[RMDB]
RNA sequence: GGGAACGACUCGAGUAGAGUCGAAAACAGCUGGCUAAUAUCAUAAUUAACAAAGUUGCUACUAUGUCUGCAAAGUUUAAUCGAAUAAUUUGCCAGUGAUAUGAUGACAUUGUCACAAAGAUCACAAUCAUAACGAUGGAUUCGUCCAUCGUUAUGAAAAAGAAACAACAACAACAAC
Reactivity to 2A3 in 0.01 (KOAc 150mM, MgCl2 10mM, bicine 150mM(pH8.5), 24C), signal-to-noise 9, nucleotides 027 to 126: c030a010g020c010u010g000g000c020u050a010a020u030a020u080c040a060u040a230a040u080u050a010a010c010a040a240a070g130u050u010g060c010u010a060c030u140a130u300g160u090c080u020g010c000a030a050a060g030u040u050u080a020a020u030c030g030a050a020u110a120a090u020u000u010g010c000c000a000g000u010g020a010u020a040u130g120a060u020g010a020c130a230u120u300g020u020c010a010c020a040a130a030g110a030u070c030a010c030a110a090
Reactivity to DMS in 0.01 (KOAc 150mM, MgCl2 10mM, bicine 150mM(pH8.5), 24C), signal-to-noise 7, nucleotides 027 to 126: c050a190g010c020u010g000g000c000u010a020a010u000a060u010c190a100u010a140a050u020u000a010a030c070a090a100a120g010u010u000g000c010u000a080c090u020a180u020g010u020c130u000g010c010a010a030a070g010u020u000u000a020a010u010c130g000a100a070u010a040a040u020u010u000g000c010c010a020g010u000g000a100u000a050u010g000a110u010g000a030c020a170u020u020g000u000c020a030c110a060a100a090g000a050u010c050a070c150a080a140

This 177-nucleotide RNA was probed chemically with 2A3 and DMS. For 2A3 the reverse transcriptase was SuperScript II with manganese. DMS adducts were read by reverse transcription with MarathonRT. Conditions: 150 mM KOAc, 10 mM MgCl2 and 150 mM bicine (pH 8.5), 24 C.